[RMDB]
RNA sequence: GGGAACGACUCGAGUAGAGUCGAAAACGGGGUUGGCUAUAGUUGAUUUCGAACCGUAUGCUUAUGUAUAUGGAAUGAUUUGUACGCUUUACGCAUGUGUACACUCACUCUCAGUUCACUCUUGUGAGAGAAGGGAGAGAGAGAUAUUUUGCGAUUAGGUAUCUUGGAUCUUCGGAUUCGGGAUAUCAAAAGAAACAACAACAACAAC
Reactivity to 2A3 in 0.01 (KOAc 150mM, MgCl2 10mM, bicine 150mM(pH8.5), 24C), signal-to-noise 2, nucleotides 027 to 156: c040g010g000g000g010u030u020g030g010c060u080a040u020a070g000u000u030g010a140u030u040u050c020g040a030a020c000c000g000u000a000u000g000c010u080u090a070u170g020u020a020u010a010u010g000g000a020a020u030g020a030u020u000u080g000u000a000c000g000c000u040u050u020a010c000g000c000a010u030g000u000g000u000a000c000a000c000u000c000a050c000u000c000u000c000a030g010u040u020c030a010c020u040c010u070u160g040u130g050a020g000a000g010a030a040g070g010g000a000g000a000g000a010g000a000g000a000u010a060u040u130u060u040g010c010g030a040u050u090a030
Reactivity to DMS in 0.01 (KOAc 150mM, MgCl2 10mM, bicine 150mM(pH8.5), 24C), signal-to-noise 2, nucleotides 027 to 156: c020g010g010g030g040u010u000g020g000c050u000a090u000a140g000u000u010g020a110u010u000u000c020g010a080a250c000c000g030u000a020u010g030c030u000u010a110u010g040u000a040u000a030u010g020g010a100a130u000g010a100u010u010u000g010u000a050c020g000c050u000u000u000a140c100g030c040a070u000g050u000g010u000a020c020a120c110u010c000a200c010u000c010u000c020a070g000u000u000c020a090c020u000c020u010u000g000u010g040a080g010a050g010a070a110g030g000g020a030g010a040g010a080g040a060g010a110u000a030u000u000u000u000g020c030g000a210u000u010a080
The record gives the reactivity of an RNA of 207 nucleotides to 2A3 and DMS.
The DMS profile rests on 4,833 reads.